This 177-nucleotide RNA was probed chemically with DMS and 2A3. For DMS the reverse transcriptase was MarathonRT. The reactions ran in a buffer of 150 mM KOAc, 10 mM MgCl2 and 150 mM bicine (pH 8.5), at 24 C. 2A3 adducts were read by reverse transcription with SuperScript II with manganese.
RNA sequence: GGGAACGACUCGAGUAGAGUCGAAAAGAUAUGGAGCGUAAUUACCGAGGAUCGGAAAAUAUGCUACCCACCAGUCUCGGAAACGAGACUGAGGCAUAUUUUCCGGGAGGUGAUACGCUCCUAAGUCGUUAAUGUUACCCUUCGGGGUAACAUUAACAAAAGAAACAACAACAACAAC
Reactivity to DMS in 0.01 (KOAc 150mM, MgCl2 10mM, bicine 150mM(pH8.5), 24C), signal-to-noise 1, nucleotides 027 to 126: g000a110u000a300u000g000g000a040g000c020g020u040a050a110u010u000a020c010c010g030a050g020g020a030u020c000g000g000a000a000a020a000u020a000u000g000c000u010a110c030c040c020a300c080c000a010g020u000c000u000c000g010g000a140a120a140c000g020a000g000a020c000u000g000a060g020g020c010a010u000a010u000u000u000u010c000c000g000g000g000a030g020g060u010g000a000u000a050c010g000c010u000c000c000u000a030a050g010u000c130
Reactivity to 2A3 in 0.01 (KOAc 150mM, MgCl2 10mM, bicine 150mM(pH8.5), 24C), signal-to-noise 2, nucleotides 027 to 126: g110a060u230a140u300g000g000a000g000c010g020u020a300a300u230u030a010c000c000g060a300g050g010a010u030c010g000g000a000a000a010a000u000a010u010g000c010u100a270c030c090c020a020c010c000a000g010u000c000u000c000g020g060a170a060a050c020g010a000g000a000c010u000g000a000g000g000c010a000u020a010u000u020u000u020c000c000g000g010g000a000g000g020u000g000a010u000a020c000g020c010u000c000c000u000a020a000g090u060c080